[RMDB]
RNA sequence: GGGAACGACUCGAGUAGAGUCGAAAACGAUUCCAAUUUUCCGCAAGGAAUGUCAUCGCGACCGCCCCGCCGGUGUCUGGACACCCGCAGUACGUCGCAGCUUCGAUCCCGUAUCGGGUGCCUCUCAACCUACUAAACCCUUCGGGGUUUAGUAGGUAAAAGAAACAACAACAACAAC
Reactivity to DMS in 0.01 (KOAc 150mM, MgCl2 10mM, bicine 150mM(pH8.5), 24C), signal-to-noise 1, nucleotides 027 to 126: c100g000a060u000u020c060c060a130a070u020u000u020u000c010c020g040c260a080a210g000g010a020a020u000g010u000c060a060u010c070g000c070g010a020c050c080g000c020c090c080c050g000c070c090g010g010u020g040u000c060u000g020g020a120c100a050c010c020c070g000c110a020g010u000a060c090g030u000c010g050c090a070g010c110u000u000c100g000a110u000c030c040c030g070u000a150u000c030g000g030g000u000g000c070c020u020c050u020c060a180
About this RNA
The record gives the reactivity of an RNA of 177 nucleotides to DMS. The reactions ran in a buffer of 150 mM KOAc, 10 mM MgCl2 and 150 mM bicine (pH 8.5), at 24 C. Source: RMDB library RFMREP, as collected in RNAgym.